Structure probing data (DMS) for a 207-nucleotide construct. DMS adducts were read by reverse transcription with MarathonRT. Conditions: 150 mM KOAc, 10 mM MgCl2 and 150 mM bicine (pH 8.5), 24 C.

RNA sequence: GGGAACGACUCGAGUAGAGUCGAAAAGGAGUUCUGAGACCCCCAGUAAUUCCCUUGCAGACCCUGCGGAGCGCGGCGCCCCUCCCCCAUUCCCUUCUCUCGGUCCCCCGACUCCGCGAAGGAGGAAGUUGCAGCGCAGGGGAAGAGGCGGUUCAGCCUAUUGCUAUAUCUUCGGAUAUAGCAAUAGAAAAGAAACAACAACAACAAC
Reactivity to DMS in 0.01 (KOAc 150mM, MgCl2 10mM, bicine 150mM(pH8.5), 24C), signal-to-noise 1, nucleotides 027 to 156: g000g010a120g020u000u010c030u000g010a190g000a140c030c020c000c000c030a130g010u000a040a190u010u000c000c020c030u000u000g060c030a200g000a170c020c000c010u000g020c010g010g010a040g000c040g010c050g010g040c040g020c030c000c000c040u000c000c010c030c020c030a200u000u000c030c000c010u000u000c020u000c040u000c030g030g030u000c050c030c000c000c070g030a040c000u000c030c000g040c020g010a080a100g010g000a070g010g030a090a240g020u000u000g030c020a150g000c080g030c020a100g000g000g010g010a030a030g000a120g020g000c050g010g010u000u000c040a120g000c130